[RMDB]
RNA sequence: GGGAACGACUCGAGUAGAGUCGAAAAUUCAUGAUGGGGACCGUGCAGUGAUUACAUAUGAGGGGGACUCCAGUGCUGGGUAUAAUCAUGAUGUGUCUAUUUUGCGGGCAUGGAUCCGUACCACCAAUCCAGCACUAUAAUUCGUUAUAGUGCUGGAAAAAGAAACAACAACAACAAC
Reactivity to 2A3 in 0.01 (KOAc 150mM, MgCl2 10mM, bicine 150mM(pH8.5), 24C), signal-to-noise 2, nucleotides 027 to 126: u040u020c020a020u070g080a010u030g000g030g000g020a010c020c010g020u040g040c040a010g050u020g100a120u090u160a070c040a050u260a130u180g070a150g040g010g020g050g040a020c000u000c030c000a040g030u040g060c040u080g000g000g070u050a050u050a060a060u050c030a040u040g050a030u060g050u010g030u000c030u030a100u020u120u030u040g030c040g000g000g000c030a050u090g050g000a040u000c010c030g000u010a070c030c020a070c000c010a000a060
Reactivity to DMS in 0.01 (KOAc 150mM, MgCl2 10mM, bicine 150mM(pH8.5), 24C), signal-to-noise 5, nucleotides 027 to 126: u000u000c040a050u000g010a090u010g020g000g010g010a120c060c060g010u000g010c060a060g010u010g000a110u000u000a070c100a060u000a080u020g020a120g010g000g010g010g010a100c040u010c030c040a070g010u000g020c080u010g010g000g000u000a070u010a070a080u000c020a050u010g000a050u000g010u000g010u010c030u010a130u000u000u000u000g010c030g000g000g000c050a100u000g020g010a060u000c040c050g010u010a100c060c030a130c090c120a080a140